[RMDB]
RNA sequence: GGGAACGACUCGAGUAGAGUCGAAAAGUAGAGGUGACGACCUUUGCCAGUACGUUUUAUGGGUGCAGCAGCCUGACAGCGCUCCCGUCCUUUGCUGACUGCGCGAAAGUCACCACUUUCUCAUACGCUUUUGCUAACUGUGGAUCGCUCACGAAAAUCACAAUACGGAUUUCGAUCCGUAUUGUGAAAAAGAAACAACAACAACAAC
Reactivity to DMS in 0.01 (KOAc 150mM, MgCl2 10mM, bicine 150mM(pH8.5), 24C), signal-to-noise 1, nucleotides 027 to 156: g030u000a070g000a060g010g050u010g020a090c090g020a090c030c030u000u000u000g030c000c000a080g040u000a060c050g030u000u010u000u000a070u020g020g000g000u020g000c080a060g010c000a160g010c020c010u010g020a110c120a170g000c010g000c030u000c040c040c000g000u000c020c040u000u000u000g020c010u000g040a090c000u000g000c090g060c000g010a030a060a110g020u010c000a040c030c010a070c020u000u000u000c020u000c050a220u000a160c050g000c010u000u020u000u000g020c000u000a040a060c060u000g020u000g020g000a050u010c000g090c070u010c050a060c050g030a090a070a100a230
Reactivity to 2A3 in 0.01 (KOAc 150mM, MgCl2 10mM, bicine 150mM(pH8.5), 24C), signal-to-noise 4, nucleotides 027 to 156: g090u120a010g020a020g060g010u020g020a010c060g070a070c010c040u070u080u070g020c000c000a030g010u060a060c050g040u070u020u050u110a120u150g030g000g010u030g040c070a050g010c000a020g020c090c060u150g050a060c050a040g010c020g020c030u010c000c010c000g010u050c020c030u150u140u110g000c020u040g020a110c000u000g000c000g000c000g140a020a030a000g020u020c010a000c010c000a000c000u020u060u000c020u010c020a090u140a090c070g040c030u060u090u120u160g020c030u070a100a090c030u060g000u070g030g040a050u090c050g020c070u050c010a030c030g050a020a040a040a080

Annotation: The record gives the reactivity of an RNA of 207 nucleotides to DMS and 2A3. 2A3 adducts were read by reverse transcription with SuperScript II with manganese. DMS adducts were read by reverse transcription with MarathonRT. The 2A3 profile rests on 2,983 reads. Values are in units of 0.01, from 0 to 300, in steps of 10.